[RMDB]
RNA sequence: GGGAACGACUCGAGUAGAGUCGAAAAGAUAUGGAAUGACUCCAACCCGACCAGGGAGCUCAUAAAGUGUCGGAAACGACAUACAAAGAGCGAGGAUCUGGUCGGGUUGGAGGUCAUUCCUAAGUCACGUAUUGUUCUACUUCGGUAGAACAAUACGAAAAGAAACAACAACAACAAC
Reactivity to DMS in 0.01 (KOAc 150mM, MgCl2 10mM, bicine 150mM(pH8.5), 24C), signal-to-noise 2, nucleotides 027 to 126: g000a060u010a300u010g010g020a020a000u010g010a080c010u000c000c010a000a040c020c000c010g000a000c000c000a010g010g000g000a020g010c010u000c000a030u010a140a130a240g010u000g020u000c000g000g000a160a120a270c020g010a050c010a020u000a070c240a180a200a170g000a010g010c030g010a070g050g010a020u000c010u000g020g000u000c000g010g010g000u010u000g000g020a000g000g030u000c000a030u000u000c010c000u020a010a160g010u000c030a280